[RMDB]
RNA sequence: GGGAACGACUCGAGUAGAGUCGAAAACACUACUCUUCGGAGUAGUGAAAAAACCUUUGUGUAGCGAAGAACACUUCACUUUGCGCAUCCCAUUGGGAUGCGACCCAAACCAAGUGGGAGCUACACUCUGGUAAAAAGACGCAGUUCGCUGCGUCAAGUGGUACCAGGUAUUCGUACCUGGUACCACAAAAGAAACAACAACAACAAC
Reactivity to 2A3 in 0.01 (KOAc 150mM, MgCl2 10mM, bicine 150mM(pH8.5), 24C), signal-to-noise 2, nucleotides 027 to 156: c000a000c000u000a000c000u000c010u020u080c250g060g000a000g000u000a000g000u000g020a000a000a000a000a000a000c000c000u000u020u010g000u000g000u000a010g000c040g060a300a030g030a220a020c040a000c000u020u080c010a070c140u010u040u080g000c000g000c000a000u030c000c010c120a300u240u300g010g000g000a000u020g000c000g020a020c000c000c030a050a060a020c040c030a050a000g010u040g000g060g000a020g000c000u000a000c000a000c010u000c000u000g000g010u070a040a060a040a030a080g000a000c000g000c000a000g010u040u070c130g100c180u000g000c010g010u000c000a020a020